[RMDB]
RNA sequence: GGGAACGACUCGAGUAGAGUCGAAAAGAAGGACAUAACGCGAAGGAGCAGAGAGAAGACUGCAGUGACGCGAAUCACUAGAGGUCAACGACGGCAAGAGAGAGCCGAAGGAGACGAUCCUUAGGAGCCCAUGAUAUCCAUUCGUGGAUAUCAUGGGAAAAGAAACAACAACAACAAC
Reactivity to 2A3 in 0.01 (KOAc 150mM, MgCl2 10mM, bicine 150mM(pH8.5), 24C), signal-to-noise 5, nucleotides 027 to 126: g070a040a030g060g030a050c040a090u200a110a060c100g000c020g070a060a030g040g050a030g000c030a000g040a020g030a020g040a140a070g090a020c000u010g000c020a040g030u040g060a010c010g040c040g100a040a050u030c000a010c030u040a030g010a030g080g110u000c010a030a000c010g030a000c000g020g010c030a130a030g060a010g020a010g010a020g110c000c010g010a010a000g020g000a030g000a000c060g030a050u040c000c020u030u040a050g030g090a030g060
Reactivity to DMS in 0.01 (KOAc 150mM, MgCl2 10mM, bicine 150mM(pH8.5), 24C), signal-to-noise 5, nucleotides 027 to 126: g010a050a050g000g000a080c140a070u030a150a080c040g000c060g020a080a080g000g000a200g020c030a030g000a140g000a100g010a120a180g000a030c050u010g010c120a020g000u060g010a110c030g020c130g020a140a180u020c030a030c050u020a100g000a120g000g020u000c010a050a220c050g030a260c080g020g000c000a030a060g010a130g000a170g000a070g000c010c010g020a030a180g000g000a220g000a060c060g000a070u000c000c020u010u000a100g030g010a130g000
The data come from the RNA Mapping Database (RMDB), library OK1LIB. The record gives the reactivity of an RNA of 177 nucleotides to 2A3 and DMS. Conditions: 150 mM KOAc, 10 mM MgCl2 and 150 mM bicine (pH 8.5), 24 C. For DMS, 6,503 sequencing reads were counted. For 2A3 the reverse transcriptase was SuperScript II with manganese.